An RNA of 177 nucleotides, treated with DMS and 2A3 and read out base by base. It was measured as part of the RMDB library RFM100. For 2A3 the reverse transcriptase was SuperScript II with manganese.
RNA sequence: GGGAACGACUCGAGUAGAGUCGAAAAACGUCCGGUACGCCGGACGAACUGCAGACUCCAGCGCCAUUUUCAGAGCUAUAAGUGUGAAGUGAUGAUAGCUCUUUCAAUGGUACUGCAGUAAGCAUAAGUAGACGAAGGGAUUCGUCCCUUCGUCUACAAAAGAAACAACAACAACAAC
Reactivity to DMS in 0.01 (KOAc 150mM, MgCl2 10mM, bicine 150mM(pH8.5), 24C), signal-to-noise 1, nucleotides 027 to 126: a060c000g000u040c000c000g070g000u020a020c170g050c040c000g020g040a010c000g060a020a040c090u010g000c040a000g010a180c070u000c130c030a020g050c130g000c000c000a030u000u010u000u000c020a060g030a030g000c000u000a000u010a070a180g010u030g020u000g010a180a090g030u020g020a100u000g000a030u000a000g000c000u000c000u020u000u000c000a000a000u010g100g000u000a160c000u000g030c070a000g030u030a090a050g020c110a090u000a110a160
Reactivity to 2A3 in 0.01 (KOAc 150mM, MgCl2 10mM, bicine 150mM(pH8.5), 24C), signal-to-noise 4, nucleotides 027 to 126: a000c010g000u000c010c000g020g000u060a090c270g020c040c000g010g000a010c000g010a010a000c000u000g000c010a010g020a140c070u060c090c010a050g020c050g030c050c000a000u000u000u000u020c030a010g000a000g000c020u000a060u050a210a130g060u120g070u150g300a190a180g100u090g100a130u130g030a010u050a010g000c020u000c000u000u010u000c010a000a000u000g020g010u020a030c000u000g000c000a000g010u050a070a020g000c010a110u080a260a070